[RMDB]
RNA sequence: GGGAACGACUCGAGUAGAGUCGAAAACGAUACGCGCAAGCUGACUGUACAGGGACCAUUCGAACUUAAGGCUAAGAAAUUCCUUCAAAUAGCUGGAGAUGAUACCGUAUAUGCAAUUAAUAACGACCCUUAGAAGGCGAUUCGUCGCCUUCUAAGGAAAAGAAACAACAACAACAAC
Reactivity to DMS in 0.01 (KOAc 150mM, MgCl2 10mM, bicine 150mM(pH8.5), 24C), signal-to-noise 2, nucleotides 027 to 126: c070g000a110u000a110c110g010c050g040c080a050a140g000c020u000g020a070c030u000g020u010a070c090a070g000g000g020a060c140c100a030u010u000c070g000a070a080c080u000u000a110a110g010g050c080u000a040a110g000a030a080a110u000u000c030c040u010u000c070a030a060a080u000a070g010c020u010g000g000a170g010a080u000g000a040u010a030c070c030g010u000a100u030a020u010g000c110a090a110u000u000a070a070u000a030a050c090g000a070c130
Reactivity to 2A3 in 0.01 (KOAc 150mM, MgCl2 10mM, bicine 150mM(pH8.5), 24C), signal-to-noise 1, nucleotides 027 to 126: c010g020a050u070a120c060g070c000g000c010a060a000g000c040u070g080a050c070u030g000u100a050c020a100g050g010g040a010c000c040a060u090u030c040g020a030a080c010u120u050a140a010g020g000c000u020a080a000g080a040a080a040u100u020c020c000u030u020c040a000a070a090u060a060g000c000u010g040g070a030g010a050u110g040a030u020a090c030c000g000u050a200u010a020u220g020c010a050a110u090u100a190a050u240a070a090c090g030a080c030